This 177-nucleotide RNA was probed chemically with DMS and 2A3. DMS adducts were read by reverse transcription with MarathonRT. Conditions: 150 mM KOAc, 10 mM MgCl2 and 150 mM bicine (pH 8.5), 24 C.
[RMDB]
RNA sequence: GGGAACGACUCGAGUAGAGUCGAAAAUAGGUCGUGUUCGCACGACCUAAGAAAAAAUGCAUAAAAUGCCAGUAACCCGAAACACAAGGGAGUGCACCUGGCCUACGAUGUCGUUCGCGACAUCGAACUCCCAAUGAACGUUCGCGUUCAUUGGGAGAAAAGAAACAACAACAACAAC
Reactivity to DMS in 0.01 (KOAc 150mM, MgCl2 10mM, bicine 150mM(pH8.5), 24C), signal-to-noise 2, nucleotides 027 to 126: u000a030g020g020u000c000g070u000g000u000u000c190g010c020a000c000g070a000c000c000u000a010a050g000a000a000a020a020a160a100u010g000c040a050u010a060a100a130a120u000g010c000c020a010g000u010a140a170c000c030c000g000a170a080a080c270a110c190a100a170g000g020g000a040g010u010g000c070a070c220c020u030g010g000c000c300u020a030c000g010a000u010g000u000c000g000u000u000c240g020c000g000a000c010a000u000c000g000a090a130
Reactivity to 2A3 in 0.01 (KOAc 150mM, MgCl2 10mM, bicine 150mM(pH8.5), 24C), signal-to-noise 2, nucleotides 027 to 126: u070a000g000g010u000c000g010u010g020u040u030c270g020c100a010c030g000a000c000c000u000a010a000g000a020a000a000a000a000a000u110g000c020a000u230a210a190a050a030u120g000c020c000a030g020u040a100a120c010c000c000g010a120a240a020c120a010c020a080a040g030g010g010a060g010u050g080c010a030c030c000u010g010g000c000c000u040a060c020g000a000u010g020u010c000g000u040u050c200g000c010g080a010c000a010u010c000g000a010a000